[RMDB]
RNA sequence: GGGAACGACUCGAGUAGAGUCGAAAAGACCAUGAGGCCUUGACCGAUCGCGAGUUGGCCUGGUCGCAGACCGACUUCCCAAGCGAAGCUCCGGCGCGUUUCGAGGGCGACUCGUAUAACGAAGGCGGGUAGAGACGGCAUUCGUGCCGUCUCUACCAAAAGAAACAACAACAACAAC
Reactivity to 2A3 in 0.01 (KOAc 150mM, MgCl2 10mM, bicine 150mM(pH8.5), 24C), signal-to-noise 3, nucleotides 027 to 126: g030a020c010c000a060u130g150a030g070g090c030c030u070u110g040a120c080c090g070a110u030c150g000c000g000a040g000u000u030g090g090c000c000u010g030g000u010c020g000c020a020g010a170c000c000g160a300c000u020u060c000c000c020a150a020g190c250g050a020a000g020c060u000c090c000g000g000c040g000c000g010u000u170u080c130g190a080g000g000g000c010g010a030c000u010c030g010u050a050u020a020a000c000g000a000a010g020g000c010g000
Reactivity to DMS in 0.01 (KOAc 150mM, MgCl2 10mM, bicine 150mM(pH8.5), 24C), signal-to-noise 1, nucleotides 027 to 126: g010a180c000c000a090u050g000a170g120g040c000c010u030u000g000a300c070c000g060a010u000c300g010c000g040a070g000u000u010g000g000c080c000u030g000g000u000c000g050c000a100g050a260c000c000g000a100c000u000u000c000c000c230a100a140g010c150g000a000a020g000c000u020c020c000g030g000c000g000c140g000u000u050u010c030g000a000g000g000g040c000g010a010c000u060c060g040u000a100u040a040a070c110g000a090a040g000g000c010g000

Structure probing data (2A3 and DMS) for a 177-nucleotide construct.
For 2A3 the reverse transcriptase was SuperScript II with manganese.
It was measured as part of the RMDB library OK1LIB.
Reactivities are given for positions 27 through 126.
Conditions: 150 mM KOAc, 10 mM MgCl2 and 150 mM bicine (pH 8.5), 24 C.
Reactivities are rounded to 0.1 and cut off at 0 and 3.